[RMDB]
RNA sequence: GGGAACGACUCGAGUAGAGUCGAAAACGCAAGGUCGACAGCAGAUCCUCGGCGGCCUUCGCCGUGGCGGUGUCCACGAUCACCAGGCCUUGCGCCGGCAUGAUUGCGGCGAAGGUGCGCUUGCGGCCUCUUCGUGCGAAUUCGUUCGCACGAAGAGAAAAGAAACAACAACAACAAC
Reactivity to 2A3 in 0.01 (KOAc 150mM, MgCl2 10mM, bicine 150mM(pH8.5), 24C), signal-to-noise 1, nucleotides 027 to 126: c030g000c010a000a010g020g000u030c010g070a160c120a050g120c030a020g070a130u020c000c020u040c100g000g010c000g000g020c000c000u000u020c030g010c010c010g020u040g030g030c100g110g140u080g040u060c040c040a090c110g010a040u080c020a030c090c040a080g000g000c000c000u070u160g010c020g000c000c000g000g050c070a110u130g040a110u120u200g020c050g020g010c010g010a000a000g060g010u170g080c010g000c000u000u090g030c000g000g000c020
Reactivity to DMS in 0.01 (KOAc 150mM, MgCl2 10mM, bicine 150mM(pH8.5), 24C), signal-to-noise 2, nucleotides 027 to 126: c070g020c020a050a010g010g000u010c010g020a120c200a170g010c210a140g000a090u000c000c030u000c220g010g000c010g010g000c020c030u000u000c010g000c000c030g040u000g000g010c040g030g010u010g040u000c020c010a190c100g010a040u010c020a060c110c050a270g010g000c000c020u010u000g010c140g040c020c020g000g010c170a070u000g000a070u000u010g000c120g000g020c010g010a040a010g000g010u000g020c010g010c000u010u010g040c010g000g000c150
Overview
Structure probing data (2A3 and DMS) for a 177-nucleotide construct. The RNA was probed in 150 mM KOAc, 10 mM MgCl2 and 150 mM bicine (pH 8.5) at 24 C. DMS adducts were read by reverse transcription with MarathonRT. 2A3 adducts were read by reverse transcription with SuperScript II with manganese. Values cover nucleotides 27 to 126. High 2A3 reactivity points to a flexible backbone, as in loops and unpaired stretches.